[RMDB]
RNA sequence: GGGAACGACUCGAGUAGAGUCGAAAACUUGAUACACUAUUACUUUCAGAUGUGCUUAAUGACUUAGAUGCACUCACAGAAUCAGAUAGGCUUACACUUGUCGAUUUCGAGGUACUAGCUGAUGUAGUGCGUGAUAGCAUUUCGAUGCUAUCACGCAAAAAGAAACAACAACAACAAC
Reactivity to DMS in 0.01 (KOAc 150mM, MgCl2 10mM, bicine 150mM(pH8.5), 24C), signal-to-noise 2, nucleotides 027 to 126: c050u000u020g060a150u000a100c050a080c040u000a090u000u000a050c000u000u000u000c090a120g050a040u010g000u000g010c010u000u000a060a040u000g000a120c260u010u020a070g010a050u000g000c010a030c010u000c010a110c300a220g000a060a030u000c040a030g010a040u000a050g000g010c060u000u010a070c300a080c000u000u000g010u000c070g000a060u000u000u000c100g000a010g000g010u000a010c090u000a020g000c080u000g010a090u000g000u020a010g000
Reactivity to 2A3 in 0.01 (KOAc 150mM, MgCl2 10mM, bicine 150mM(pH8.5), 24C), signal-to-noise 2, nucleotides 027 to 126: c020u040u100g070a040u060a140c030a010c030u060a020u090u100a090c040u170u140u140c000a050g020a130u130g040u000g030c000u120u110a100a060u260g140a150c040u040u120a050g050a150u080g000c010a000c000u000c000a060c010a050g080a030a010u020c000a030g010a010u080a040g000g040c080u200u050a050c090a000c020u020u060g050u070c040g050a060u040u080u110c050g000a010g030g000u050a020c000u030a000g070c050u020g010a070u010g090u110a040g100
This 177-nucleotide RNA was probed chemically with DMS and 2A3. Values cover nucleotides 27 to 126. The reactions ran in a buffer of 150 mM KOAc, 10 mM MgCl2 and 150 mM bicine (pH 8.5), at 24 C. DMS adducts were read by reverse transcription with MarathonRT. For 2A3, 1,167 sequencing reads were counted.